[RMDB]
RNA sequence: GGGAACGACUCGAGUAGAGUCGAAAAGAGGUUACGUUCGCGUAACCUCAAACAAAGUGGAAAUCACCGAAAUAAAACGGUGCCGGCCACAAAAACCGGAAAAAAGAAGCGACUUCGGUCGCUUCAACAUAAUUAGGAUCUUCGGAUCCUAAUUAUGAAAAGAAACAACAACAACAAC
Reactivity to 2A3 in 0.01 (KOAc 150mM, MgCl2 10mM, bicine 150mM(pH8.5), 24C), signal-to-noise 2, nucleotides 027 to 126: g000a000g010g000u020u010a000c000g010u020u020c050g000c000g080u010a000a020c010c000u000c000a010a000a000c010a000a180a010g010u030g000g020a040a080a140u150c000a000c000c010g060a080a160a040u220a070a160a020a040c000g020g010u000g000c020c030g050g010c000c020a030c000a070a080a000a030a120c030c030g010g050a130a060a000a020a020a070g000a000a020g010c010g010a010c050u060u130c300g130g030u020c010g000c000u000u000c000a000a000
Reactivity to DMS in 0.01 (KOAc 150mM, MgCl2 10mM, bicine 150mM(pH8.5), 24C), signal-to-noise 3, nucleotides 027 to 126: g010a000g000g010u000u000a000c010g030u010u010c170g050c010g010u000a000a000c000c000u000c000a020a050a080c110a090a070a170g010u020g000g010a110a130a140u020c010a000c000c000g000a060a100a130u010a080a140a180a100c020g000g010u000g010c070c230g000g000c030c010a020c010a050a090a030a080a080c030c020g000g010a000a010a090a080a130a060g000a020a000g000c000g000a020c010u000u000c180g020g010u000c000g020c000u000u000c000a050a110

This 177-nucleotide RNA was probed chemically with 2A3 and DMS.
For DMS, 2,124 sequencing reads were counted.
Reactivities are given for positions 27 through 126.
The 2A3 profile rests on 2,355 reads.